Structure probing data (DMS and 2A3) for a 177-nucleotide construct. DMS adducts were read by reverse transcription with MarathonRT. Source: RMDB library OK2TRN, as collected in RNAgym. Values cover nucleotides 27 to 126. Conditions: 150 mM KOAc, 10 mM MgCl2 and 150 mM bicine (pH 8.5), 24 C.

RNA sequence: GGGAACGACUCGAGUAGAGUCGAAAAAUAUGAUUUUCACUUCACUUGCUUCUCUGGCCGAACAACGACGUGGUGCUUUGGUGGUCUUUACGCGAACAUUGACCUUACGCGACAUUGCCGAUACGGGUCUUACUUGUCCGUUCGCGGACAAGUAAGAAAAAGAAACAACAACAACAAC
Reactivity to DMS in 0.01 (KOAc 150mM, MgCl2 10mM, bicine 150mM(pH8.5), 24C), signal-to-noise 2, nucleotides 027 to 126: a080u020a120u010g010a120u010u010u000u000c030a090c020u000u000c010a090c060u000u000g000c040u000u000c020u000c040u010g020g040c020c030g030a060a070c120a060a110c070g000a060c110g040u000g000g010u000g010c060u010u010u000g010g020u000g000g020u000c030u020u010u000a060c040g000c000g010a030a050c080a130u000u020g000a040c010c010u000u010a080c130g000c010g000a050c070a080u010u000g020c000c020g000a110u000a070c160g000g000g020
Reactivity to 2A3 in 0.01 (KOAc 150mM, MgCl2 10mM, bicine 150mM(pH8.5), 24C), signal-to-noise 2, nucleotides 027 to 126: a000u300a150u210g110a100u070u040u040u060c040a050c060u040u030c030a030c060u030u070g060c000u070u080c030u050c030u050g060g000c010c010g080a060a040c040a010a050c060g130a020c060g120u070g100g000u040g120c080u040u000u060g040g040u020g000g040u000c000u030u100u010a070c080g000c030g020a030a020c020a100u050u020g000a010c000c020u020u050a040c050g000c010g000a000c080a160u120u250g030c050c000g000a000u070a140c000g080g040g050